[RMDB]
Source: RMDB library TTRINS, as collected in RNAgym. Structure probing data (DMS and 2A3) for a 177-nucleotide construct.

RNA sequence: GGGAACGACUCGAGUAGAGUCGAAAAGAUAUGGAGAUCGAUGAAAUACACCACGAAGAACACUUUACCGAAGAUCGGAAACGAUCUUCGGUAAAGUGGGAGUGGAGUAUGGAGAUCUCCUAAGUCACUAGUAUUACAAGUUCGCUUGUAAUACUAGAAAAGAAACAACAACAACAAC
Reactivity to DMS in 0.01 (KOAc 150mM, MgCl2 10mM, bicine 150mM(pH8.5), 24C), signal-to-noise 5, nucleotides 027 to 126: g010a040u000a300u010g010g000a020g010a010u000c000g000a190u020g000a180a120a010u000a010c000a140c000c000a010c000g020a140a170g000a150a220c000a010c000u000u000u000a000c000c000g010a020a010g000a010u000c000g020g000a100a090a220c010g000a010u000c000u000u000c000g010g000u000a000a000a000g010u000g000g000g000a120g020u000g000g000a080g040u000a000u000g000g000a100g000a010u000c000u000c000c000u000a010a050g000u010c030a250
Reactivity to 2A3 in 0.01 (KOAc 150mM, MgCl2 10mM, bicine 150mM(pH8.5), 24C), signal-to-noise 5, nucleotides 027 to 126: g020a010u100a070u230g050g010a010g000a010u040c100g140a300u090g110a070a090a010u030a000c040a040c030c010a010c050g200a300a160g040a140a000c020a000c000u010u000u000a010c000c000g010a000a000g000a010u020c020g060g010a140a070a010c000g000a010u000c010u000u010c000g000g000u000a000a000a000g000u000g000g000g010a000g000u010g000g020a020g010u010a000u020g000g010a020g000a000u010c000u000c000c000u000a010a010g000u010c010a010
Values cover nucleotides 27 to 126. DMS adducts were read by reverse transcription with MarathonRT. In probing experiments dimethyl sulfate is read out at A N1 and C N3, which are open when not base-paired. Reactivities are rounded to 0.1 and cut off at 0 and 3.